[RMDB]
RNA sequence: GGGAACGACUCGAGUAGAGUCGAAAAGCCCUUGAAUUCAUCUAGGGGUAUCCUAACAGUUUUAGGGCGGUGAUCCAACCGUCCCUGAGGCGACAUCUCCAAGUUCUGGGGAGUGGUGGUUGACCGUUCACACGGUCCGUCGCGACGACCCGGGGCCCACUUCUACUUAGUUCGCUAAGUAGAAGUGAAAAGAAACAACAACAACAAC
Reactivity to 2A3 in 0.01 (KOAc 150mM, MgCl2 10mM, bicine 150mM(pH8.5), 24C), signal-to-noise 5, nucleotides 027 to 156: g040c000c000c000u000u030g120a140a090u240u160c090a120u050c250u190a040g010g000g020g020u100a060u020c010c000u050a170a070c050a110g000u000u020u020u020a010g000g010g000c020g010g020u040g040a200u140c110c060a060a020c000c000g220u300c000c000c030u010g000a010g000g010c020g040a060c040a110u080c090u040c090c050a100a030g010u040u000c010u000g000g000g000g000a020g010u020g040g000u000g000g010u000u010g000a000c000c010g010u110u200c140a080c020a000c120g000g000u000c010c000g000u000c000g000c020g100a000c000g000a010c000c000c000g000g000g000g000c010c030
Reactivity to DMS in 0.01 (KOAc 150mM, MgCl2 10mM, bicine 150mM(pH8.5), 24C), signal-to-noise 2, nucleotides 027 to 156: g010c000c000c020u000u020g000a070a140u010u010c090a110u000c040u010a080g020g010g030g000u000a020u000c010c020u000a110a130c110a230g010u010u010u010u000a030g020g020g020c000g000g010u000g000a230u000c230c140a100a080c030c000g000u000c000c000c020u000g000a020g010g020c000g020a110c060a150u010c030u000c030c050a090a140g030u000u000c040u010g020g060g040g020a160g040u000g020g000u000g020g010u000u000g000a010c000c000g030u010u010c210a130c220a070c000g000g020u000c010c030g000u000c000g050c000g000a070c020g000a180c020c010c040g000g030g050g070c060c140